[RMDB]
RNA sequence: GGGAACGACUCGAGUAGAGUCGAAAACGCAGGUGUCGGAGGGAUCGCCAGCCCUCAGGAUAGUGAGCUCCCGCAGAGGGAUAAGCUAUCUCCCUGCGAAACCAGGAAUUCGUUCGCGAAUUCCUGGGCAGAUUUUAUAGUUCGCUAUAAAAUCUGCAAAAGAAACAACAACAACAAC
Reactivity to 2A3 in 0.01 (KOAc 150mM, MgCl2 10mM, bicine 150mM(pH8.5), 24C), signal-to-noise 3, nucleotides 027 to 126: c020g000c010a020g040g000u160g120u300c150g130g000a010g090g010g000a090u240c070g040c090c030a040g030c000c000c000u000c000a000g000g000a000u000a000g080u080g060a020g090c030u020c000c060c000g000c080a160g070a090g200g000g000a010u010a020a000g000c000u000a000u000c000u000c010c000c000u000g040c010g000a070a000a010c000c000a010g010g010a000a000u000u010c000g000u070u100c210g000c010g130a000a010u010u010c000c000u010g010g010
Reactivity to DMS in 0.01 (KOAc 150mM, MgCl2 10mM, bicine 150mM(pH8.5), 24C), signal-to-noise 3, nucleotides 027 to 126: c060g020c010a010g020g020u000g010u020c240g020g010a010g020g020g000a080u000c080g020c060c080a220g010c000c000c000u000c000a200g000g000a020u000a010g010u010g000a160g040c300u000c010c020c010g030c240a140g000a240g020g010g010a000u010a060a280g000c020u000a020u000c000u000c050c000c000u000g010c010g000a060a050a300c020c000a010g010g000a030a010u000u000c000g010u000u010c260g010c010g000a010a000u000u000c000c000u000g000g000

Description:
This 177-nucleotide RNA was probed chemically with 2A3 and DMS. Values cover nucleotides 27 to 126. For DMS, 1,694 sequencing reads were counted. Conditions: 150 mM KOAc, 10 mM MgCl2 and 150 mM bicine (pH 8.5), 24 C. It was measured as part of the RMDB library RFMREP. For 2A3 the reverse transcriptase was SuperScript II with manganese.